This 207-nucleotide RNA was probed chemically with 2A3.
RNA sequence: GGGAACGACUCGAGUAGAGUCGAAAAUCCUAAGUCACGCAAACUAGCUCUUGGAUUUAUUUGUGUAGUCUUCGGAAACGAAGACGCAGAUACAAAUUGUCAGAGCUAGGUAGCGUGAUAUGGAAAAUCCUGGUAGCACUUCGGUGCUACCAGGAAACAAGCAUAGCAACUUCGGUUGCUAUGCUUGAAAAGAAACAACAACAACAAC
Reactivity to 2A3 in 0.01 (KOAc 150mM, MgCl2 10mM, bicine 150mM(pH8.5), 24C), signal-to-noise 1, nucleotides 027 to 156: u000c000c000u030a100a060g010u000c000a000c000g000c030a300a180a000c030u000a000g000c020u010c000u030u190g170g010a070u210u300u090a030u120u020u010g050u000g050u080a120g020u050c000u010u000c000g070g040a130a110a050c020g040a000a020g010a000c000g020c010a020g020a000u100a040c020a000a000a020u010u040g050u060c030a000g000a000g010c000u000a000g000g020u000a000g010c000g020u000g000a010u000a020u030g040g010a010a090a000a190u040c000c000u000g010g000u000a000g000c010a030c000u040u020c300g030g000u000g000c000u010a000c000c000a000g000g000a000a000a000